[RMDB]
RNA sequence: GGGAACGACUCGAGUAGAGUCGAAAAGAUAUGGAUAUCGUCCUAUAUUGUAGUUCAGCUUGGACCGUACUGGGUCGGAAACGACCUUACGCUAGCUGUCUACAAUAUAGGACGAUAUCCUAAGUCACAAUGCCUUACCGUUCGCGGUAAGGCAUUGAAAAGAAACAACAACAACAAC
Reactivity to DMS in 0.01 (KOAc 150mM, MgCl2 10mM, bicine 150mM(pH8.5), 24C), signal-to-noise 2, nucleotides 027 to 126: g020a050u000a300u000g010g010a020u000a000u000c000g000u000c000c000u010a000u000a000u000u000g020u000a000g020u020u010c000a010g000c020u000u000g070g000a110c300c010g030u000a000c300u000g000g030g030u010c000g000g010a120a140a210c000g050a010c010c000u000u000a000c020g020c020u000a000g040c010u010g000u010c000u000a000c000a000a000u000a010u000a000g020g000a000c010g010a000u000a000u000c000c000u000a010a120g010u000c010a250

Background: This 177-nucleotide RNA was probed chemically with DMS. For DMS the reverse transcriptase was MarathonRT. The DMS profile rests on 1,641 reads. High DMS reactivity at an A or C suggests that its Watson-Crick edge is free. It was measured as part of the RMDB library TTRINS. Values cover nucleotides 27 to 126.